[RMDB]
RNA sequence: GGGAACGACUCGAGUAGAGUCGAAAAGCUGUUUCACUCACGAUAGACUCUUGAGGAAGAGUGUCAGUAUUGCUUCCUCAAGCAAUACAUUACGGUAUGCCAAUACUGUAAUUGACAGCAGAUUGGCAUCUGCUCUAUCUCAUGAAACAGGUGAGUCGCGUUUUAAAUAUUUCGAUAUUUAAAACGCAAAAGAAACAACAACAACAAC
Reactivity to DMS in 0.01 (KOAc 150mM, MgCl2 10mM, bicine 150mM(pH8.5), 24C), signal-to-noise 4, nucleotides 027 to 156: g020c000u000g010u000u000u000c030a180c060u000c030a070c130g020a080u000a040g020a110c100u010c000u000u020g010a180g030g020a040a020g000a040g010u010g010u010c080a220g030u000a020u000u010g010c020u000u000c040c100u000c100a030a020g050c030a030a030u010a070c040a280u010u000a060c030g010g020u010a000u000g010c130c200a100a070u000a050c000u000g020u000a030a110u010u010g000a080c050a090g020c000a030g010a120u010u010g010g010c100a200u000c010u010g010c010u000c010u000a030u000c010u000c100a080u000g010a030a030a070c010a050g000g010u010g010a070g010u000c080
Reactivity to 2A3 in 0.01 (KOAc 150mM, MgCl2 10mM, bicine 150mM(pH8.5), 24C), signal-to-noise 9, nucleotides 027 to 156: g050c020u010g000u010u000u010c020a020c030u040c000a030c050g070a100u040a090g050a050c030u010c010u040u040g070a040g040g080a050a020g010a010g010u060g050u070c060a020g020u020a020u020u050g010c000u050u030c040c070u120c070a000a000g000c000a000a010u030a030c020a060u100u120a040c050g060g020u140a010u020g050c020c010a040a030u090a240c060u010g020u100a080a150u120u170g110a060c040a030g000c000a000g010a020u030u050g050g000c020a010u000c010u020g000c000u000c000u010a050u010c010u010c010a010u040g010a020a050a020c020a020g030g060u040g030a020g050u120c110
This 207-nucleotide RNA was probed chemically with DMS and 2A3. Values are in units of 0.01, from 0 to 300, in steps of 10.